[RMDB]
RNA sequence: GGGAACGACUCGAGUAGAGUCGAAAACGCAAUAAUUUCCAGCGCACUGUCUGCGCCUAAUAGCCGCGGUAAGCGAACUGAACCGCCGAAGCCCGGCAUGAUACCGAGUUUGGUUUCCGGUAGGCCGGUAUCUGACCGAUUUCGAUCGGUCAGAUACAAAAGAAACAACAACAACAAC
Reactivity to DMS in 0.01 (KOAc 150mM, MgCl2 10mM, bicine 150mM(pH8.5), 24C), signal-to-noise 2, nucleotides 027 to 126: c120g020c100a100a050u000a070a100u010u000u000c030c020a160g010c070g030c020a120c120u010g000u000c080u010g030c040g020c010c090u010a060a090u000a050g020c090c090g010c070g030g040u000a180a110g000c010g020a060a070c090u010g020a110a070c050c000g020c030c030g000a090a090g010c090c050c030g010g020c000a040u000g000a180u010a010c030c010g010a080g000u000u000u000g020g010u000u000u000c030c000g040g000u000a050g000g000c030c050g020
Reactivity to 2A3 in 0.01 (KOAc 150mM, MgCl2 10mM, bicine 150mM(pH8.5), 24C), signal-to-noise 1, nucleotides 027 to 126: c060g020c010a060a080u150a110a090u180u000u000c020c020a000g040c000g080c020a020c080u090g150u300c070u080g010c000g060c030c010u190a180a160u120a180g080c040c010g020c060g000g030u030a080a000g050c030g050a020a030c040u110g100a060a020c030c000g000c020c020g070a030a010g030c000c000c010g000g000c040a000u100g050a020u010a040c030c020g040a040g050u050u100u160g100g000u020u080u000c010c000g050g050u030a100g090g090c050c000g000
The record gives the reactivity of an RNA of 177 nucleotides to DMS and 2A3. The 2A3 profile rests on 889 reads. Values cover nucleotides 27 to 126. The reactions ran in a buffer of 150 mM KOAc, 10 mM MgCl2 and 150 mM bicine (pH 8.5), at 24 C. The DMS profile rests on 1,071 reads. For 2A3 the reverse transcriptase was SuperScript II with manganese.